[RMDB]
RNA sequence: GGGAACGACUCGAGUAGAGUCGAAAAUGGGCAUUAGUGGUGCAGUUCUGCAGGCUACACAAUAUGAAACUAAGCAUAUCUUACCUUAGAGAAUGUGCCAAAGCAAAUGAUUGGCUGCAGUUCAUUAUUCACAGCCAACUCCACAACUACCACCCAAUAUCCGUGGAUCGUUCGCGAUCCACGGAUAAAAAGAAACAACAACAACAAC
Reactivity to 2A3 in 0.01 (KOAc 150mM, MgCl2 10mM, bicine 150mM(pH8.5), 24C), signal-to-noise 1, nucleotides 027 to 156: u150g040g000g030c110a060u050u050a070g000u030g040g000u000g060c100a010g000u150u000c020u190g000c010a000g000g120c030u100a110c050a000c040a010a130u120a020u130g080a130a070a070c130u110a020a020g070c060a020u020a010u050c040u020u100a020c060c010u020u110a110g000a000g050a170a080u110g000u040g000c000c020a120a030a030g050c020a050a020a050u220g000a300u120u020g000g000c020u010g000c050a060g000u030u030c050a040u080u210a070u110u120c140a050c020a060g030c000c000a000a050c000u050c030c000a030c000a000a110c090u110a040c000c020a010c010c000c040a150a000